[RMDB]
RNA sequence: GGGAACGACUCGAGUAGAGUCGAAAAUUACAUAAGUCUAACACCUUGUUUCGGACUAACAAGGGCGCAUGGAGGAUGGCCGCCCCUCCAUAGUUAGACGUCCGAGAACCAGCCGAAAUGAAAAAGACAUGCCUCCUGAUUUCGAUCAGGAGGCAUGAAAAGAAACAACAACAACAAC
Reactivity to 2A3 in 0.01 (KOAc 150mM, MgCl2 10mM, bicine 150mM(pH8.5), 24C), signal-to-noise 1, nucleotides 027 to 126: u040u150a010c050a040u200a210a000g040u010c010u000a020a000c000a030c030c010u000u030g050u020u050u040c160g130g020a300c060u030a010a000c000a000a030g020g000g000c040g000c010a020u000g000g000a000g020g000a020u100g120g000c060c030g000c030c000c000c000u000c000c000a010u000a000g030u000u060a010g000a060c000g020u000c000c000g020a030g000a180a010c040c000a000g000c000c050g000a020a020a020u090g060a010a010a040a030a010g090a050
Reactivity to DMS in 0.01 (KOAc 150mM, MgCl2 10mM, bicine 150mM(pH8.5), 24C), signal-to-noise 1, nucleotides 027 to 126: u040u090a100c130a090u070a100a070g000u000c040u000a030a040c080a200c040c000u000u010g000u000u000u000c070g000g000a070c110u000a070a030c010a000a070g000g000g000c300g000c120a050u010g000g000a040g020g020a170u020g000g000c020c080g000c050c090c000c000u010c000c000a050u000a040g000u000u000a100g000a090c030g000u040c000c000g000a110g000a180a160c050c210a040g000c050c010g000a140a100a020u020g000a050a050a030a120a000g030a120
Background
Conditions: 150 mM KOAc, 10 mM MgCl2 and 150 mM bicine (pH 8.5), 24 C. This 177-nucleotide RNA was probed chemically with 2A3 and DMS. Values cover nucleotides 27 to 126. It was measured as part of the RMDB library OK1LIB.